[RMDB]
RNA sequence: GGGAACGACUCGAGUAGAGUCGAAAAGAGUCGUCAUUAGCGUCUGUGAAACCUCACCCCGAAAACAGACGCGAAAGAAAUCUCAGACGAAAGGGGUGGGGGAGUCUGAGAUAUGUCGACGAAGAAAGGGUUAACAUAAGUUCGCUUAUGUUAACCCAAAAGAAACAACAACAACAAC
Reactivity to 2A3 in 0.01 (KOAc 150mM, MgCl2 10mM, bicine 150mM(pH8.5), 24C), signal-to-noise 3, nucleotides 027 to 126: g140a010g000u000c000g000u000c000a030u000u050a020g010c000g000u000c010u000g060u010g110a180a100a090c000c020u040c020a040c000c000c000c010g160a090a100a010a010c010a000g000a000c000g020c000g010a000a000a020g110a010a100a000u010c000u010c000a000g010a010c020g100a110a050a050g020g000g000g000u030g000g000g000g020g000a040g000u000c000u000g000a000g000a000u020a010u030g040u020c010g000a010c030g030a050a030g100a080a060a020
Reactivity to DMS in 0.01 (KOAc 150mM, MgCl2 10mM, bicine 150mM(pH8.5), 24C), signal-to-noise 2, nucleotides 027 to 126: g000a150g010u000c000g030u010c030a100u000u040a260g000c000g000u000c000u000g010u000g000a120a080a170c110c030u000c030a140c000c000c000c000g000a100a080a150a020c000a020g000a000c000g000c010g010a000a100a100g020a060a100a010u000c010u000c000a010g000a020c020g010a060a140a110g020g000g000g050u020g030g000g000g000g030a080g000u000c000u000g000a000g000a030u000a020u010g010u010c020g020a000c000g030a170a090g030a060a030a130
Structure probing data (2A3 and DMS) for a 177-nucleotide construct. The RNA was probed in 150 mM KOAc, 10 mM MgCl2 and 150 mM bicine (pH 8.5) at 24 C. It was measured as part of the RMDB library OK1LIB.